[RMDB]
RNA sequence: GGGAACGACUCGAGUAGAGUCGAAAAUGGGCGUGCCCGGAAAACAGCGACGCCACCGCUGCCGACACCUCGUCGGCGCCCGCGGCCAGCACUCCGGUGGUCGGGGCCAGCGCCGCGGCAUUGGCCGCUCAAGACGAAUCUUCGGAUUCGUCUUGAGAAAAGAAACAACAACAACAAC
Reactivity to DMS in 0.01 (KOAc 150mM, MgCl2 10mM, bicine 150mM(pH8.5), 24C), signal-to-noise 2, nucleotides 027 to 126: u000g030g020g030c060g020u010g030c010c030c050g000g000a060a060a100a160c120a080g000c020g010a100c060g020c020c020a110c170c040g000c020u010g020c030c000g020a030c050a030c190c210u010c180g000u000c020g010g030c010g030c050c010c010g000c000g020g030c000c020a190g000c050a100c050u000c040c050g000g040u010g010g010u010c000g010g010g010g010c100c020a070g000c090g000c020c020g000c030g000g010c020a050u010u010g010g010c030c040g000
Reactivity to 2A3 in 0.01 (KOAc 150mM, MgCl2 10mM, bicine 150mM(pH8.5), 24C), signal-to-noise 1, nucleotides 027 to 126: u100g060g000g000c040g020u060g060c000c070c040g070g010a060a110a010a060c040a000g040c000g100a060c010g030c000c020a020c030c020g020c060u080g000c000c000g030a010c010a040c040c160u170c130g000u000c030g010g000c000g020c010c000c000g060c000g000g020c000c000a050g000c050a020c040u110c030c060g070g110u140g120g140u190c040g050g000g000g030c010c030a080g000c050g000c030c040g060c000g020g000c000a060u110u140g090g030c020c020g010